Record summary
The data come from the RNA Mapping Database (RMDB), library 15KREP. Chemical mapping of a 177-nucleotide RNA with DMS and 2A3. For DMS the reverse transcriptase was MarathonRT. Conditions: 150 mM KOAc, 10 mM MgCl2 and 150 mM bicine (pH 8.5), 24 C. As a SHAPE reagent, 2A3 marks flexible, mostly unpaired nucleotides at the ribose 2'-OH.

RNA sequence: GGGAACGACUCGAGUAGAGUCGAAAAGUUUCUUGAUGGUUCUCCUGCUCUUCCGGAGCCUUCUUUCGAGGUCUUCCGCGUCUUUUCUUGCUUGGAUCCAUUUCUCGAGGACGUCCUCCCUUCCUCCGAAUAUUUACUACUUCGGUAGUAAAUAUUCAAAAGAAACAACAACAACAAC
Reactivity to DMS in 0.01 (KOAc 150mM, MgCl2 10mM, bicine 150mM(pH8.5), 24C), signal-to-noise 4, nucleotides 027 to 126: g010u000u000u000c010u010u010g010a090u000g010g020u000u000c040u000c010c040u000g010c060u000c090u000u000c080c070g000g010a090g010c040c020u000u000c070u010u010u000c110g010a040g000g000u000c040u000u000c020c030g010c120g000u000c030u000u010u010u000c060u000u010g000c050u000u010g010g000a100u000c050c060a080u000u010u000c020u000c020g000a060g000g010a120c090g010u010c040c040u000c010c020c020u000u000c010c010u000c140c150
Reactivity to 2A3 in 0.01 (KOAc 150mM, MgCl2 10mM, bicine 150mM(pH8.5), 24C), signal-to-noise 4, nucleotides 027 to 126: g020u070u060u000c030u060u080g060a090u090g030g010u080u020c020u020c030c000u020g020c020u000c000u120u020c030c030g040g010a020g010c020c010u070u030c010u090u190u130c060g020a010g010g000u020c030u080u000c040c000g000c030g050u040c000u020u120u060u030c030u060u100g040c020u030u040g040g010a040u060c020c010a090u050u100u030c020u010c010g010a030g040g040a120c010g040u050c000c010u000c010c000c000u040u020c010c010u030c010c000